[RMDB]
RNA sequence: GGGAACGACUCGAGUAGAGUCGAAAAGCUGAACCGGGUUGGCCUCAGCGAACACUUGACAUACGGUUAGUCCUGUCUUGUGGAUUAGGACGUUCUACCUCCGGCUGGGCCGGUAGUUCGUCCGAAAGGCAAGCAUGUGGUUCGCCACGUGCUUGCCAAAAGAAACAACAACAACAAC
Reactivity to DMS in 0.01 (KOAc 150mM, MgCl2 10mM, bicine 150mM(pH8.5), 24C), signal-to-noise 3, nucleotides 027 to 126: g000c010u010g000a080a100c030c020g010g000g020u010u020g000g010c180c030u010c060a030g010c030g010a150a110c050a020c020u010u010g020a020c050a070u020a080c170g000g010u020u070a040g010u010c050c080u020g000u020c010u000u010g000u000g000g020a110u010u010a100g010g020a000c000g000u010u000c010u010a010c020c020u060c100c010g000g010c070u060g050g010g020c030c150g000g010u010a000g010u010u010c020g010u000c000c010g010a050a130a090
Reactivity to 2A3 in 0.01 (KOAc 150mM, MgCl2 10mM, bicine 150mM(pH8.5), 24C), signal-to-noise 4, nucleotides 027 to 126: g010c010u010g000a070a020c030c040g190g080g000u080u240g030g020c010c040u070c010a020g020c010g040a040a000c020a000c020u010u030g000a000c000a040u140a080c030g090g010u080u080a040g070u180c000c030u030g010u010c000u010u040g000u050g070g020a090u070u140a040g000g000a000c000g000u000u000c010u010a010c000c030u020c030c000g240g040c080u280g060g120g000c060c020g000g000u000a000g010u000u000c000g000u000c000c020g010a030a010a000

Structure probing data (DMS and 2A3) for a 177-nucleotide construct. The RNA was probed in 150 mM KOAc, 10 mM MgCl2 and 150 mM bicine (pH 8.5) at 24 C. It was measured as part of the RMDB library OK1LIB.